[RMDB]
RNA sequence: GGGAACGACUCGAGUAGAGUCGAAAAAGCCUGGUCGAUACGUCGACCGGGCAAUGCCGCCACAACGGCUUCCUGGCGUGGCGGAUCUCAUCCAAUGGAGCAACGCUCCGGAUACGUCCGGAGCGAAAAAAGCUCUGCUUCUUCGGAAGCAGAGCAAGUUGAUGUUAAACUUCGGUUUAACAUCAACAAAAGAAACAACAACAACAAC
Reactivity to 2A3 in 0.01 (KOAc 150mM, MgCl2 10mM, bicine 150mM(pH8.5), 24C), signal-to-noise 2, nucleotides 027 to 156: a000g300c000c000u000g000g000u010c000g000a010u010a080c140g070u010c000g000a000c000c010g000g010g010c000a000a000u020g010c000c000g000c010c000a020c000a060a000c070g020g000c000u190u150c000c010u000g010g020c020g010u000g000g000c040g010g010a010u040c030u010c010a180u110c080c070a050a160u180g010g000a010g030c020a060a070c010g000c000u010c000c000g010g000a060u060a030c190g070u000c030c010g000g000a000g000c000g000a000a000a000a000a000a000g000c000u000c000u010g000c000u000u000c010u000u020c040g090g000a000a000g000c000a010g000a000g010c000a010a000

The data come from the RNA Mapping Database (RMDB), library M2RFPK. Chemical mapping of a 207-nucleotide RNA with 2A3. For 2A3 the reverse transcriptase was SuperScript II with manganese. Values cover nucleotides 27 to 156.